Annotation
Structure probing data (2A3 and DMS) for a 177-nucleotide construct. The DMS profile rests on 3,674 reads. The reactions ran in a buffer of 150 mM KOAc, 10 mM MgCl2 and 150 mM bicine (pH 8.5), at 24 C.
[RMDB]
RNA sequence: GGGAACGACUCGAGUAGAGUCGAAAAGAUGAGGUUAAGAACUAGAGAGAACUCGAGACGCGUGAUGACGCUCAAGAGAAAACGCGAGAAUGAGCAAGUGUGCUAGACGAAGCACACAAGAGGAAGACCGAUCCUAUUAGUUCGCUAAUAGGAUCGGAAAAGAAACAACAACAACAAC
Reactivity to 2A3 in 0.01 (KOAc 150mM, MgCl2 10mM, bicine 150mM(pH8.5), 24C), signal-to-noise 3, nucleotides 027 to 126: g090a050u170g050a020g120g020u060u050a070a060g020a120a050c040u100a090g010a000g000a000g020a180a020c000u000c030g000a010g000a050c040g000c040g020u090g040a200u150g060a030c010g000c000u030c050a050a060g100a010g000a130a060a010a010c010g040c000g010a050g030a090a070u100g000a000g060c050a060a040g020u000g000u000g040c010u060a040g000a120c090g110a090a000g000c010a000c010a000c000a000a030g020a030g080g020a030a050g050a040
Reactivity to DMS in 0.01 (KOAc 150mM, MgCl2 10mM, bicine 150mM(pH8.5), 24C), signal-to-noise 3, nucleotides 027 to 126: g020a040u010g000a030g000g000u050u000a050a180g000a040a060c080u010a090g030a160g000a060g000a110a130c020u010c000g000a180g000a060c130g000c030g080u010g000a150u000g010a110c070g000c050u000c060a060a130g000a060g000a040a070a100a060c060g020c090g000a090g000a080a050u000g010a060g000c040a070a080g000u020g040u000g030c000u000a050g010a200c250g000a110a040g000c000a030c010a000c000a000a010g000a080g030g030a070a050g000a110

2A3 adducts were read by reverse transcription with SuperScript II with manganese.